[RMDB]
RNA sequence: GGGAACGACUCGAGUAGAGUCGAAAAACUAAGCGCGGGAACGGACGCGCGCUUAGUUGACGAGGAGGAGGUUUAUCGAGGUUUUCGGCGGAUGCCUCCCGGCUGGAGCGAUGACAGCCGCAAGUCCACGUUGAGCUAACUUCGGUUAGCUCAACGUAAAAGAAACAACAACAACAAC
Reactivity to DMS in 0.01 (KOAc 150mM, MgCl2 10mM, bicine 150mM(pH8.5), 24C), signal-to-noise 2, nucleotides 027 to 126: a010c000u010a020a010g000c000g000c000g000g000g000a110a120c130g000g010a090c030g000c000g000c000g000c000u000u000a000g000u000u000g020a090c130g000a140g000g010a060g020g000a020g000g000u000u040u010a070u050c020g020a130g000g010u030u030u050u000c060g030g060c060g000g020a060u050g010c040c000u000c010c000c000g000g010c010u000g010g000a150g000c180g010a140u010g010a080c010a000g000c000c010g000c150a080a090g000u010c010c070
Reactivity to 2A3 in 0.01 (KOAc 150mM, MgCl2 10mM, bicine 150mM(pH8.5), 24C), signal-to-noise 3, nucleotides 027 to 126: a000c000u010a010a000g000c000g000c000g000g000g120a170a040c030g070g160a020c070g030c010g000c000g000c120u000u030a000g000u000u030g060a080c080g020a020g100g040a020g000g000a000g010g100u020u090u110a110u080c010g020a110g030g030u070u050u050u120c070g120g050c060g070g000a030u030g020c000c000u000c070c000c000g000g000c000u040g010g000a080g060c060g050a070u100g050a030c010a040g010c000c020g000c080a020a020g050u000c030c000
Chemical mapping of a 177-nucleotide RNA with DMS and 2A3.
The 2A3 profile rests on 1,369 reads.
The reactions ran in a buffer of 150 mM KOAc, 10 mM MgCl2 and 150 mM bicine (pH 8.5), at 24 C.
For DMS the reverse transcriptase was MarathonRT.
It was measured as part of the RMDB library RFM100.
Reactivities are given for positions 27 through 126.